[RMDB]
RNA sequence: GGGAACGACUCGAGUAGAGUCGAAAAGAUAUGGACAUGUCGCUAGUCGGGAGGUCGGAAACGACCUAACGACUUGGACCGAGCAUGUCCUAAGUCAAACACGUUCCCACUUCGGUGGGAACGUGAACGGGGAUAAUAGGUUCGCCUAUUAUCCCCGAAAAGAAACAACAACAACAAC
Reactivity to DMS in 0.01 (KOAc 150mM, MgCl2 10mM, bicine 150mM(pH8.5), 24C), signal-to-noise 3, nucleotides 027 to 126: g000a020u010a270u010g000g000a020c000a000u000g010u000c030g010c000u000a040g000u000c000g010g000g040a030g000g020u000c000g010g000a070a030a130c000g010a010c000c000u000a040a020c010g000a000c000u000u000g020g010a050c300c030g000a090g030c000a000u000g010u000c010c000u000a010a050g000u000c010a140a120a250c010a010c010g000u000u010c000c000c000a010c000u000u000c160g040g000u000g000g010g000a000a010c000g010u000g000a020a070
Reactivity to 2A3 in 0.01 (KOAc 150mM, MgCl2 10mM, bicine 150mM(pH8.5), 24C), signal-to-noise 2, nucleotides 027 to 126: g020a020u060a040u130g000g000a010c000a000u000g000u030c000g020c070u020a020g000u020c020g000g010g030a030g000g020u000c010g020g000a080a060a060c010g000a000c000c010u040a000a020c020g000a000c000u010u090g000g020a030c070c030g010a080g130c000a010u020g010u010c000c000u000a080a010g060u030c050a130a060a020c020a010c000g000u000u000c010c040c000a000c000u070u080c220g090g000u020g010g010g000a000a000c000g010u000g010a020a020
An RNA of 177 nucleotides, treated with DMS and 2A3 and read out base by base. Source: RMDB library TTRDEL, as collected in RNAgym. For 2A3 the reverse transcriptase was SuperScript II with manganese. High 2A3 reactivity points to a flexible backbone, as in loops and unpaired stretches. For DMS the reverse transcriptase was MarathonRT.